[RMDB]
The record gives the reactivity of an RNA of 207 nucleotides to 2A3. The RNA was probed in 150 mM KOAc, 10 mM MgCl2 and 150 mM bicine (pH 8.5) at 24 C.
RNA sequence: GGGAACGACUCGAGUAGAGUCGAAAACGCAUGCGAGAGCAUGCGGCUAAGCUUCGGCUUAGUAAGAGCAACUUAGGAUUUUAGGCUCCCCGGCGUGUCUCGAACCAUGCCGGGCCAAACCCAUAGGGCUGGCGGUCCCUGUGCGGUAAUAAUUCAAGAUCCUAUGACUGUUCGCAGUCAUAGGAUCAAAAGAAACAACAACAACAAC
Reactivity to 2A3 in 0.01 (KOAc 150mM, MgCl2 10mM, bicine 150mM(pH8.5), 24C), signal-to-noise 2, nucleotides 027 to 156: c010g000c000a000u000g020c000g010a010g010a000g020c000a000u010g020c000g020g000c000u000a000a000g000c000u020u100c290g110g000c000u000u000a000g000u010a040a020g000a020g000c010a010a100c060u110u110a080g080g010a110u070u130u040u130a040g040g000c000u000c000c000c000c000g010g000c010g020u040g010u010c110u040c200g040a030a040c060c000a020u000g000c000c000g010g000g000c000c010a030a020a000c030c000c000a010u020a000g000g000g030c050u090g090g070c050g060g030u120c000c000c000u000g000u000g030c140g000g000u030a090a080u110a080a030u090u080c010a040a000